[RMDB]
RNA sequence: GGGAACGACUCGAGUAGAGUCGAAAAGAUAUGGAUUCGGCAGCUUUUGACGAACAUUGUUCGGAAACGAACACCUCGGGUUCGAUAAGCUGCGAAUCCUAAGUCAAAUCAGGACUUCGGUCCUGAAGCAUAAUCCUCACUUCGGUGAGGAUUAUGCAAAAGAAACAACAACAACAAC
Reactivity to DMS in 0.01 (KOAc 150mM, MgCl2 10mM, bicine 150mM(pH8.5), 24C), signal-to-noise 2, nucleotides 027 to 126: g020a020u000a260u000g010g000a000u010u000c000g080g020c000a010g000c000u010u000u000u000g000a230c170g020a010a030c020a210u010u020g030u000u000c000g020g000a050a070a140c000g000a000a000c000a040c300c290u000c210g030g000g000u000u020c000g010a080u010a020a000g000c000u000g010c000g000a010a010u000c000c000u010a010a090g000u000c010a130a160a220u000c010a000g020g000a000c000u000u030c230g040g000u000c000c010u000g000a010a060
Reactivity to 2A3 in 0.01 (KOAc 150mM, MgCl2 10mM, bicine 150mM(pH8.5), 24C), signal-to-noise 3, nucleotides 027 to 126: g040a020u030a010u080g010g010a050u010u060c100g300g040c060a010g000c020u260u070u300u300g300a240c150g000a020a010c020a110u070u130g000u050u010c000g000g020a020a030a030c010g000a000a000c020a080c000c070u280c300g300g070g010u010u030c010g040a170u040a280a010g010c000u020g000c000g010a010a000u000c010c000u020a070a000g000u000c020a000a020a280u030c010a010g000g020a010c000u050u140c300g080g000u000c020c020u000g000a020a020